[RMDB]
RNA sequence: GGGAACGACUCGAGUAGAGUCGAAAAAUUGUCCCUCCAGAGGGUUCACUUCCCCAGCUCCUCCAUAGUGAAAUCUUUGUUUUCUUUCCUCGUCCUUGCGGGUAAGUUCCGCUAACAGCUUUUGCUCCUCCUCCGGCAGCUGUUUUCCUCUGCCCUCGAUGUUUACACAGUUCGCUGUGUAAACAUCAAAAGAAACAACAACAACAAC
Reactivity to 2A3 in 0.01 (KOAc 150mM, MgCl2 10mM, bicine 150mM(pH8.5), 24C), signal-to-noise 2, nucleotides 027 to 156: a010u170u140g020u040c010c030c040u010c030c060a050g030a060g100g060g030u180u300c100a020c060u030u060c050c010c050c010a050g040c020u030c020c040u030c040c000a040u060a020g070u060g080a060a130a130u090c020u070u100u060g090u050u080u050u000c040u020u010u040c000c020u060c000g040u050c020c000u020u090g000c020g000g010g000u030a050a020g020u110u000c000c000g020c030u000a040a000c010a030g000c010u050u180u180u250g010c000u040c010c000u030c000c000u040c040c000g010g010c000a020g000c020u030g040u000u010u040u020c010c020u050c020u020g050c000c040c010u020c070